[RMDB]
The data come from the RNA Mapping Database (RMDB), library OK1LIB. An RNA of 177 nucleotides, treated with DMS and 2A3 and read out base by base. The RNA was probed in 150 mM KOAc, 10 mM MgCl2 and 150 mM bicine (pH 8.5) at 24 C. DMS adducts were read by reverse transcription with MarathonRT. For 2A3, 1,342 sequencing reads were counted.
RNA sequence: GGGAACGACUCGAGUAGAGUCGAAAACGUGAACAUCGCUCUGCUAAGUCCCGUCGUUCUUCCAGUCAGAGCGAGAUUGUAAGCAACCUUAUGCGCAAUGAAGACAUAGAGGGACUUCUCAAUAAAGGAUCAGUACCGAGUUCGCUCGGUACUGAUCAAAAGAAACAACAACAACAAC
Reactivity to DMS in 0.01 (KOAc 150mM, MgCl2 10mM, bicine 150mM(pH8.5), 24C), signal-to-noise 1, nucleotides 027 to 126: c210g060u050g010a060a270c030a180u000c000g020c040u000c000u020g000c050u000a060a040g000u000c070c000c100g000u000c050g030u000u000c030u020u000c000c050a090g000u000c000a000g000a020g090c000g000a080g060a060u000u000g000u000a030a210g000c030a020a100c070c120u000u030a000u000g050c120g000c040a070a080u000g000a040a200g000a050c080a050u030a050g000a100g000g000g000a080c140u000u000c030u020c090a070a140u000a110a190a080g000
Reactivity to 2A3 in 0.01 (KOAc 150mM, MgCl2 10mM, bicine 150mM(pH8.5), 24C), signal-to-noise 2, nucleotides 027 to 126: c090g060u080g080a080a050c010a090u020c020g000c000u030c000u030g030c000u040a000a090g040u040c040c000c020g030u020c000g140u090u010c000u110u010c030c000a030g060u110c000a000g000a000g000c080g010a000g000a020u060u090g020u050a030a080g000c000a000a140c030c000u140u060a030u160g020c030g000c020a050a050u090g030a080a010g030a020c050a030u120a020g100a040g060g010g010a000c000u100u010c020u010c060a110a180u150a120a150a010g170